[RMDB]
RNA sequence: GGGAACGACUCGAGUAGAGUCGAAAAGAUAUGGAUACAGCUCGACUAGGCGUUGAAAUCGGAAACGAUGGAGCCUACUCGAGCUAUGUAUCCUAAGUCAAAAGAGAGAUCCUUCGGGAUCUCUCAACAUCAUGUCAGUCUUCGGACUGACAUGAUGAAAAGAAACAACAACAACAAC
Reactivity to DMS in 0.01 (KOAc 150mM, MgCl2 10mM, bicine 150mM(pH8.5), 24C), signal-to-noise 2, nucleotides 027 to 126: g000a070u010a300u000g000g000a020u000a020c020a030g010c000u000c000g010a010c110u000a020g000g050c010g030u000u030g040a090a110a020u000c010g010g010a140a070a140c000g010a010u010g010g010a150g020c000c000u000a010c130u000c020g000a000g000c020u010a000u010g050u000a000u000c010c000u000a030a100g000u010c030a090a040a050a200g000a020g030a000g000a030u000c000c000u000u020c230g050g000g000a010u000c000u000c000u000c000a020a090
Reactivity to 2A3 in 0.01 (KOAc 150mM, MgCl2 10mM, bicine 150mM(pH8.5), 24C), signal-to-noise 1, nucleotides 027 to 126: g020a010u060a040u160g020g010a010u010a000c040a000g090c010u000c000g010a010c020u010a000g000g050c060g190u300u050g030a040a000a000u010c000g010g000a040a060a050c020g000a010u020g020g000a020g000c000c020u000a000c000u000c000g000a000g000c000u010a020u000g000u000a000u000c000c000u000a110a040g070u030c030a080a060a240a000g010a000g000a000g000a010u000c030c000u100u150c300g070g000g000a000u000c000u040c010u010c000a000a010